[RMDB]
RNA sequence: GGGAACGACUCGAGUAGAGUCGAAAAUCCUCUAACGCUUUUCUUGAUUUGAGGACAUCAUGUUUUAGUGUCGCUGCACUUACAACUGGUUUGACUUUUCAAACUGUGCGGCCUGGCAAUUUUAACCUAAGUUCGGGUUUCGACCCGAACAAAAGAAACAACAACAACAAC
Reactivity to DMS in 0.01 (KOAc 150mM, MgCl2 10mM, bicine 150mM(pH8.5), 24C), signal-to-noise 3, nucleotides 027 to 129: u020c000c010u030c050u040a000a000c180g040c000u010u020u060u000c080u020u020g010a130u000u080u070g010a100g000g090a050c110a000u020c080a040u040g030u000u150u010u010a100g000u000g070u000c080g100c010u030g010c040a020c040u120u040a030c000a090a050c240u040g010g030u030u070u000g020a050c300u080u060u070u040c050a000a000a000c020u050g000u000g020c060g090g030c030c250u000g020g000c010a000a070u010u000u040u050a020a000c060c020u020a030a090
Reactivity to 2A3 in 0.01 (KOAc 150mM, MgCl2 10mM, bicine 150mM(pH8.5), 24C), signal-to-noise 4, nucleotides 027 to 129: u040c020c010u020c020u020a050a010c030g030c010u030u020u080u000c020u090u150g120a130u050u000u110g080a030g030g010a030c020a040u110c020a040u110g200u100u120u000u080a070g010u020g000u020c020g010c000u000g010c010a000c010u040u170a050c060a190a110c100u060g090g010u000u000u040g080a090c060u070u070u140u060c020a000a000a000c040u040g000u000g030c010g040g010c030c000u030g000g000c000a020a050u120u060u070u060a050a060c000c000u030a040a030